[RMDB]
The record gives the reactivity of an RNA of 177 nucleotides to DMS and 2A3. Source: RMDB library OK2TRN, as collected in RNAgym. For 2A3, 12,706 sequencing reads were counted.
RNA sequence: GGGAACGACUCGAGUAGAGUCGAAAAUGACUCUGACCAGGCAGCUCUCAGUGGGGCCCUGGGCAGUUGGAACCUGAACACCUUUCCAAGGACUGCAGGGCGUGAGGCUGGGGCACGCCGAGCUGGGGUAUGUGGUAACAUUCGUGUUACCACAUACAAAAGAAACAACAACAACAAC
Reactivity to DMS in 0.01 (KOAc 150mM, MgCl2 10mM, bicine 150mM(pH8.5), 24C), signal-to-noise 7, nucleotides 027 to 126: u010g010a150c030u000c010u000g010a080c010c020a140g000g010c070a170g000c020u010c010u010c100a090g020u000g020g020g010g000c010c010c010u000g010g010g010c030a020g010u000u000g010g000a070a090c140c040u000g010a080a080c140a080c070c040u000u000u010c040c030a090a110g000g010a110c060u000g010c020a040g010g000g010c020g030u010g010a100g010g000c030u000g010g000g000g000c040a040c070g020c010c020g000a160g010c040u000g000g010g010
Reactivity to 2A3 in 0.01 (KOAc 150mM, MgCl2 10mM, bicine 150mM(pH8.5), 24C), signal-to-noise 4, nucleotides 027 to 126: u090g060a020c010u000c010u040g040a090c000c020a010g030g000c040a020g000c010u010c010u020c070a070g040u210g060g070g050g020c000c010c000u020g000g040g000c000a000g010u040u050g030g010a040a040c020c040u040g080a080a030c060a090c060c000u040u090u010c020c030a040a040g120g040a090c020u070g000c050a040g040g000g000c040g050u090g060a070g160g000c040u030g000g010g000g000c020a000c080g010c010c010g020a020g010c030u040g000g000g040